[RMDB]
RNA sequence: GGGAACGACUCGAGUAGAGUCGAAAAAUGAAGUCGGACAACCGCGUGCGGUAGUCGAUGGCCUUGGCCGACAUCGCGAAGUCCAUUCCGCCACGAUAUCUACCGGCGCUAGCAGACGCAUAAGUCCUCGUAUUCGCGAGUUCGCUCGCGAAUACGAAAAAGAAACAACAACAACAAC
Reactivity to DMS in 0.01 (KOAc 150mM, MgCl2 10mM, bicine 150mM(pH8.5), 24C), signal-to-noise 2, nucleotides 027 to 126: a030u000g000a010a050g080u000c110g000g040a110c050a300a180c050c200g000c000g020u000g010c000g040g000u000a070g000u010c000g000a180u000g000g000c020c090u010u000g000g060c050c020g110a260c030a120u000c160g000c130g000a060a090g000u000c000c000a130u000u010c300c300g060c000c000a040c000g000a060u180a050u020c020u020a140c040c000g040g000c000g020c000u000a220g000c100a110g000a040c000g010c040a110u000a110a170g000u040c000c110
Reactivity to 2A3 in 0.01 (KOAc 150mM, MgCl2 10mM, bicine 150mM(pH8.5), 24C), signal-to-noise 3, nucleotides 027 to 126: a000u190g040a170a030g030u030c020g080g050a170c050a100a090c100c050g030c020g000u150g300c000g000g000u030a000g000u050c000g070a300u010g010g000c000c040u000u040g010g000c020c030g050a070c070a120u220c150g000c050g140a090a000g000u050c000c000a000u050u030c100c040g000c000c010a010c000g030a020u020a030u150c000u000a010c000c010g000g000c000g000c010u020a030g020c090a050g030a030c010g000c030a000u030a150a060g070u020c000c000
Notes:
This 177-nucleotide RNA was probed chemically with DMS and 2A3. Conditions: 150 mM KOAc, 10 mM MgCl2 and 150 mM bicine (pH 8.5), 24 C. The 2A3 profile rests on 1,649 reads. The data come from the RNA Mapping Database (RMDB), library OK1LIB. DMS adducts were read by reverse transcription with MarathonRT.